[RMDB]
RNA sequence: GGGAACGACUCGAGUAGAGUCGAAAAAGGCUGGCUAAGAUCAAGCGAUCAAGCUCUUUGUCGCCACUACCGCUAUCUAAAAGCGUCGCCUGUAACACCGAGCCGUCGGCAAGGAUAGAGAGGCGAAUGUAGCAAGAUGGUUCGCCAUCUUGCUACAAAAAGAAACAACAACAACAAC
Reactivity to 2A3 in 0.01 (KOAc 150mM, MgCl2 10mM, bicine 150mM(pH8.5), 24C), signal-to-noise 1, nucleotides 027 to 126: a000g070g000c060u130g000g020c000u050a030a040g000a080u120c110a100a000g000c030g070a090u220c070a080a040g000c000u000c010u040u000u020g020u010c030g000c050c020a050c010u110a110c010c050g000c050u020a040u200c090u080a070a050a010a030g080c020g080u030c000g010c000c000u010g120u190a150a020c060a000c020c000g010a020g000c040c000g210u170c180g020g020c000a030a030g040g040a020u110a070g040a010g000a020g010g030c030g020a050a050
Reactivity to DMS in 0.01 (KOAc 150mM, MgCl2 10mM, bicine 150mM(pH8.5), 24C), signal-to-noise 2, nucleotides 027 to 126: a070g010g020c050u000g030g040c020u000a020a020g000a080u020c170a160a170g000c140g040a140u000c250a070a150g010c040u000c040u010u000u000g000u000c070g020c000c040a100c140u000a220c120c020g010c040u010a020u000c120u010a090a030a130a120g000c040g000u020c060g000c010c000u000g050u010a060a150c180a030c050c000g020a300g000c030c010g010u010c150g020g000c010a010a110g010g020a160u000a080g000a140g030a040g000g010c010g000a020a110